[RMDB]
RNA sequence: GGGAACGACUCGAGUAGAGUCGAAAAGAAAAGCACGGCAAGCACAUGUAGCACAUGAAGCAGUACAAGCAGUACAAGCACAUGAAGCACUACAAGCAGUAGAAGCAGCCGAAGCACAUGAAAAAAACGAGAUAUAAAGGUUCGCCUUUAUAUCUCGAAAAGAAACAACAACAACAAC
Reactivity to DMS in 0.01 (KOAc 150mM, MgCl2 10mM, bicine 150mM(pH8.5), 24C), signal-to-noise 3, nucleotides 027 to 126: g000a110a080a140a080g000c050a070c080g010g000c050a090a150g000c100a100c080a090u000g000u000a050g030c080a200c080a020u010g010a080a070g020c060a170g020u010a020c020a070a130g010c120a080g040u000a010c020a050a110g010c010a140c070a020u000g010a070a050g000c080a140c070u010a020c030a080a070g030c100a060g030u010a070g000a080a130g000c020a050g010c010c030g000a040a070g020c030a100c110a070u000g010a010a000a040a070a070a040a230
Reactivity to 2A3 in 0.01 (KOAc 150mM, MgCl2 10mM, bicine 150mM(pH8.5), 24C), signal-to-noise 3, nucleotides 027 to 126: g070a000a120a000a010g010c030a000c050g010g010c040a040a080g000c000a050c010a100u080g010u070a010g040c020a010c010a070u030g050a100a020g020c010a000g020u030a010c030a080a120g120c060a050g070u020a010c020a090a100g010c010a010c000a030u020g050a110a030g010c060a020c080u060a000c010a080a010g070c030a010g040u180a030g040a100a000g000c030a010g020c010c010g030a060a010g040c030a030c020a100u170g140a070a030a000a000a030a030a040